[RMDB]
Background:
The record gives the reactivity of an RNA of 177 nucleotides to 2A3 and DMS. The reactions ran in a buffer of 150 mM KOAc, 10 mM MgCl2 and 150 mM bicine (pH 8.5), at 24 C. 2A3 adducts were read by reverse transcription with SuperScript II with manganese. The data come from the RNA Mapping Database (RMDB), libraries RFM100 and RFMREP. DMS adducts were read by reverse transcription with MarathonRT.
RNA sequence: GGGAACGACUCGAGUAGAGUCGAAAACUGAUGCUUGGCUUUUUUGUUGGUGUUGGCAUCUUCGUGAUGAAAGAUCAGAAGGAGCACGGACACCAGGAUAGAAAAGAAGGGAAGCACGGACAUAAGCAAUUACCAGCUCUUUCGAGAGCUGGUAAUUAAAAGAAACAACAACAACAAC
Reactivity to 2A3 in 0.01 (KOAc 150mM, MgCl2 10mM, bicine 150mM(pH8.5), 24C), signal-to-noise 5, nucleotides 027 to 126: c020u040g030a200u020g070c000u010u000g130g130c000u040u010u040u000u000u050g130u090u020g000g000u000g000u010u010g040g010c000a080u000c000u010u020c060g300u040g020a010u000g040a150a150a140g300a080u020c000a000g000a000a000g010g000a020g000c060a050c250g080g010a010c000a000c000c000a000g040g030a030u110a170g090a020a040a030a010g050a010a060g080g040g080a010a000g020c000a010c010g000g030a010c030a120u190a050a060g110c070
Reactivity to DMS in 0.01 (KOAc 150mM, MgCl2 10mM, bicine 150mM(pH8.5), 24C), signal-to-noise 2, nucleotides 027 to 126: c000u000g000a060u000g020c010u000u010g000g010c000u000u000u000u000u000u010g010u010u000g000g000u000g030u000u000g000g030c000a050u000c000u000u010c030g000u000g000a000u000g020a150a110a100g020a040u010c020a180g010a020a030g000g000a030g020c010a060c160g000g000a030c020a010c010c000a010g000g020a070u020a070g000a060a030a030a020g000a040a060g030g000g000a020a000g010c000a020c010g010g000a120c130a080u000a060a160g000c190